Conditions: 150 mM KOAc, 10 mM MgCl2 and 150 mM bicine (pH 8.5), 24 C.
This 207-nucleotide RNA was probed chemically with 2A3 and DMS.
It was measured as part of the RMDB library OK3TST.
The DMS profile rests on 3,610 reads.
RNA sequence: GGGAACGACUCGAGUAGAGUCGAAAAGAAAUCCAGCGCAGCAGUGCCAAAAGUACAACAAAACAUGGCAAAACAAAGCAGGGCAAACACAAAUACCAGCUCAAACAGUCGCUUCUCGGUAGUACAUACCACCAUGGUGGGCAAAUAGAGCACUGAAUGACUUUUAGUAGUUCGCUACUAAAAGUCAAAAAGAAACAACAACAACAAC
Reactivity to 2A3 in 0.01 (KOAc 150mM, MgCl2 10mM, bicine 150mM(pH8.5), 24C), signal-to-noise 4, nucleotides 027 to 156: g050a020a090a000u040c010c010a050g040c050g010c030a060g000c010a000g040u020g030c010c000a010a060a030a040g090u110a160c080a150a020c060a010a190a030a000c040a060u060g010g020c000a010a080a020a040c060a000a100a010g020c010a030g010g030g000c040a070a080a020c080a020c020a060a120a030u110a060c040c030a030g010c020u020c050a110a130a110c030a030g070u070c030g020c030u080u050c050u010c030g010g010u020a040g040u020a050c030a080u100a030c000c030a010c040c010a060u190g110g000u030g040g050g000c000a000a000a080u100a070g030a000g020c020a010c040u060g070a080a070
Reactivity to DMS in 0.01 (KOAc 150mM, MgCl2 10mM, bicine 150mM(pH8.5), 24C), signal-to-noise 2, nucleotides 027 to 156: g010a110a090a100u030c010c000a100g020c060g020c030a070g010c060a060g010u000g040c010c010a030a070a090a180g030u000a080c060a080a230c050a050a080a080a080c050a120u000g010g010c030a070a040a110a040c060a030a050a050g020c000a070g010g000g020c060a060a070a070c080a090c060a050a060a070u000a090c000c000a090g030c030u010c050a040a040a120c060a040g020u000c040g000c040u010u000c010u000c030g000g040u010a000g030u000a140c060a160u000a040c000c030a030c010c040a050u010g000g020u000g010g020g010c030a020a040a090u000a090g000a090g030c040a060c010u020g010a090a190